[RMDB]
RNA sequence: GGGAACGACUCGAGUAGAGUCGAAAAAUGGCAGUGGGCAAGCAUGGCAAUGCUUGCUUAAGAUAUAGUCCGUCCCAGCUGAGAAGCUGCCUAUGAGAGGAAUGCCGUAAGGCAGGAGAGCUAAUAGGAAGUAAGUGUCUUUAAUCAACUUACUUGGCAUACCAUCACUCUUCGGAGUGAUGGUAUGAAAAGAAACAACAACAACAAC
Reactivity to 2A3 in 0.01 (KOAc 150mM, MgCl2 10mM, bicine 150mM(pH8.5), 24C), signal-to-noise 4, nucleotides 027 to 156: a000u100g020g020c030a050g050u130g030g000g000c010a020a000g010c000a010u030g200g050c160a180a070u000g010c000u000u000g000c000u000u000a020a010g040a010u090a010u050a190g040u040c030c010g020u030c010c000c000a000g000c020u030g000a010g010a100a000g000c000u000g000c000c000u020a050u070g120a070g010a000g040g030a050a060u010g000c010c010g050u120a040a140g000g000c010a000g000g010a050g000a000g000c000u020a050a010u030a050g030g000a000a000g010u000a010a010g000u000g040u070c160u090u290u210a120a160u130c040a030a050c000u010u000a000c000u000u000g000g000
Reactivity to DMS in 0.01 (KOAc 150mM, MgCl2 10mM, bicine 150mM(pH8.5), 24C), signal-to-noise 3, nucleotides 027 to 156: a080u000g050g000c030a080g010u000g030g000g040c020a020a000g030c010a020u000g020g050c300a120a220u000g000c000u010u010g000c010u000u000a050a040g000a180u010a170u000a090g020u000c050c000g020u000c010c000c000a110g000c030u010g010a200g020a100a190g000c010u000g020c010c000u020a060u000g000a100g000a290g010g000a300a230u000g020c010c000g020u010a070a220g030g020c020a030g000g000a270g010a080g000c020u000a070a060u000a100g020g020a000a010g000u000a020a040g010u010g010u000c070u000u000u000a130a150u000c040a040a050c020u000u000a030c020u000u000g000g000
An RNA of 207 nucleotides, treated with 2A3 and DMS and read out base by base. The DMS profile rests on 4,129 reads. It was measured as part of the RMDB library ARCHII. DMS adducts were read by reverse transcription with MarathonRT. The reactions ran in a buffer of 150 mM KOAc, 10 mM MgCl2 and 150 mM bicine (pH 8.5), at 24 C.